[RMDB]
RNA sequence: GGGAACGACUCGAGUAGAGUCGAAAAGAUAUGGAAGGUGGUGAACUGGAGAGCCUGCGCGACCCCAUAUGUCGGAAACGACAUAUGACGCCAGGCUCGUUGAAAGUUCACGUAACAUCCUUCCUAAGUCAAAGUGCAUCACUUCGGUGAUGCACAACAUCCUUAGGAGGUUCGCCUCCUAAGGAUGAAAAGAAACAACAACAACAAC
Reactivity to 2A3 in 0.01 (KOAc 150mM, MgCl2 10mM, bicine 150mM(pH8.5), 24C), signal-to-noise 3, nucleotides 027 to 156: g010a010u030a020u090g000g000a000a010g000g010u020g000g000u000g010a010a000c000u000g030g000a030g000a000g030c000c000u140g020c220g010c020g150a260c070c000c030c000a000u000a000u000g000u000c000g000g030a030a030a030c010g010a000c000a000u000a000u000g010a020c020g000c000c010a000g010g020c010u000c000g000u020u000g020a000a000a000g000u000u000c000a000c000g000u000a000a000c010a270u200c000c000u000u000c000c000u000a050a000g010u010c040a070a080a070g010u000g000c000a010u000c000a000c010u030u150c280g030g000u000g010a000u000g000c010a000c000a000a000
Reactivity to DMS in 0.01 (KOAc 150mM, MgCl2 10mM, bicine 150mM(pH8.5), 24C), signal-to-noise 1, nucleotides 027 to 156: g010a190u030a180u010g000g000a020a010g020g010u010g020g010u000g000a020a060c020u010g000g040a200g030a000g010c030c000u010g060c120g120c010g000a300c040c170c170c030a020u000a000u000g010u000c000g030g000a120a110a170c000g010a030c020a010u000a020u000g000a100c060g030c000c030a010g010g000c000u000c000g020u000u010g000a150a140a040g000u000u000c020a000c000g000u010a030a030c110a100u000c000c000u010u000c000c000u000a000a000g010u010c040a140a120a130g030u000g000c000a000u000c010a040c010u000u010c300g060g020u020g020a010u030g000c000a010c020a000a110